[RMDB]
This 177-nucleotide RNA was probed chemically with DMS and 2A3.
Values cover nucleotides 27 to 126.
Source: RMDB library OK2TRN, as collected in RNAgym.
For DMS the reverse transcriptase was MarathonRT.
RNA sequence: GGGAACGACUCGAGUAGAGUCGAAAAGGUAGCAGAGAAGAGACUAGCCUUCAGACUAGAUAGUAUCACACUACGGGUACAUAGUAGAGACAUACAUAGAUGGGUAUGACACAUCAGAGCUGCCAUGACUACGCCCUAGUUUCGACUAGGGCGUAGUAAAAGAAACAACAACAACAAC
Reactivity to DMS in 0.01 (KOAc 150mM, MgCl2 10mM, bicine 150mM(pH8.5), 24C), signal-to-noise 2, nucleotides 027 to 126: g010g010u000a020g000c040a090g030a190g010a070a070g010a130g000a070c010u000a050g020c000c050u000u000c180a170g010a150c000u000a000g000a140u000a110g000u000a110u010c030a060c200a060c040u010a050c080g020g000g000u010a030c150a070u000a020g030u000a030g000a120g050a080c160a060u010a020c060a060u000a050g000a080u000g000g000g010u000a040u000g000a100c090a030c010a020u000c020a030g000a190g050c020u000g000c010c000a110u010g000
Reactivity to 2A3 in 0.01 (KOAc 150mM, MgCl2 10mM, bicine 150mM(pH8.5), 24C), signal-to-noise 1, nucleotides 027 to 126: g020g010u020a020g000c020a000g060a000g020a220a040g060a030g000a060c030u040a020g100c020c020u090u180c060a080g000a140c040u010a020g040a080u070a100g050u050a030u060c000a010c000a030c230u230a030c060g020g000g040u030a060c040a150u090a010g050u030a030g020a020g000a020c020a050u020a020c000a010u040a060g040a040u110g090g010g000u050a030u090g010a010c020a000c000a070u020c000a000g010a020g020c000u010g120c000c000a010u080g030